The record gives the reactivity of an RNA of 207 nucleotides to DMS and 2A3. For 2A3 the reverse transcriptase was SuperScript II with manganese. Conditions: 150 mM KOAc, 10 mM MgCl2 and 150 mM bicine (pH 8.5), 24 C. Reactivities are given for positions 27 through 156.
[RMDB]
RNA sequence: GGGAACGACUCGAGUAGAGUCGAAAAGCAGCAGGCUUACGAGCCUGCUGCAUUAAAAGCCAGGAAGGUCGCUUUUGGGGUGGUGACAAGUGUGAUCACUUGGGUGGUGGCUGUGUUUGCGUCUCUCCCAGGAAUCAUCUUUACCAGAUCUCAAAAAUGAGUAUUAUCCUUUCGAGGAUAAUACUCAAAAAGAAACAACAACAACAAC
Reactivity to DMS in 0.01 (KOAc 150mM, MgCl2 10mM, bicine 150mM(pH8.5), 24C), signal-to-noise 1, nucleotides 027 to 156: g010c010a020g050c010a050g030g030c000u000u000a140c240g060a160g070c000c030u000g010c000u000g010c010a020u000u000a050a070a150a130g030c050c070a030g000g010a100a060g030g020u000c020g040c000u010u000u000u030g020g020g030g030u000g000g060u000g020a060c050a080a080g000u010g030u020g000a080u000c020a070c000u000u000g000g010g020u000g030g030u000g010g000c020u010g040u000g000u020u000u010g040c060g020u030c020u000c030u000c010c020c010a150g010g010a080a080u000c020a060u000c030u000u000u010a080c040c070a100g020a070u000c020u010c040a010a080a050a090a130
Reactivity to 2A3 in 0.01 (KOAc 150mM, MgCl2 10mM, bicine 150mM(pH8.5), 24C), signal-to-noise 1, nucleotides 027 to 156: g000c000a020g020c000a030g040g000c000u110u110a060c300g020a040g030c000c000u000g000c000u000g100c000a000u000u010a000a000a000a000g030c030c000a020g140g000a050a020g050g060u050c080g050c150u000u010u160u080g070g020g000g000u020g050g020u000g020a020c050a050a060g070u020g000u020g160a030u060c040a020c240u010u010g030g030g000u090g010g080u020g010g000c030u030g030u090g080u290u260u190g020c050g130u040c000u000c000u010c020c000c010a010g000g050a080a050u050c010a000u010c030u010u050u030a020c010c020a080g020a190u030c030u040c070a020a070a060a080a080